[RMDB]
The data come from the RNA Mapping Database (RMDB), libraries RFM100 and RFMREP. This 177-nucleotide RNA was probed chemically with 2A3 and DMS. Values cover nucleotides 27 to 126.
RNA sequence: GGGAACGACUCGAGUAGAGUCGAAAAGGAGAGUCAAAAAGAGAAAGAGACCUAAAGGGUGAAAGCGAAUCGGGGAAGAUAAGCUAGCAGCAAAAAGGAACCGAUUCCCACCAAGUUCGGAAAGAGACAUUUGGAGUAACUUCGGUUACUCCAAAUGAAAAGAAACAACAACAACAAC
Reactivity to 2A3 in 0.01 (KOAc 150mM, MgCl2 10mM, bicine 150mM(pH8.5), 24C), signal-to-noise 4, nucleotides 027 to 126: g080g010a040g020a030g030u080c080a010a010a080a050a000g100a010g040a030a110a010g080a010g000a030c000c030u080a080a050a060g080g010g010u030g080a160a050a010g070c100g020a010a010u000c000g000g000g020g030a050a050g030a130u100a100a020g010c020u070a020g080c100a000g000c020a050a020a000a020a060g160g010a020a010c000c000g000a000u020u000c000c010c000a040c000c010a040a020g040u060u070c070g010g020a070a030a020g080a020g010a000
Reactivity to DMS in 0.01 (KOAc 150mM, MgCl2 10mM, bicine 150mM(pH8.5), 24C), signal-to-noise 5, nucleotides 027 to 126: g010g000a040g010a080g020u020c040a060a110a020a110a060g020a080g010a040a070a070g000a070g010a120c060c050u010a080a110a120g000g010g000u010g010a070a100a080g000c160g000a050a020u000c040g000g000g000g020a180a170g000a050u020a030a120g010c020u000a090g020c260a120g020c030a010a070a070a160a070g000g010a300a200c010c000g000a020u000u000c000c130c010a020c050c020a080a100g020u010u010c100g000g000a050a040a050g000a070g010a140

DMS adducts were read by reverse transcription with MarathonRT.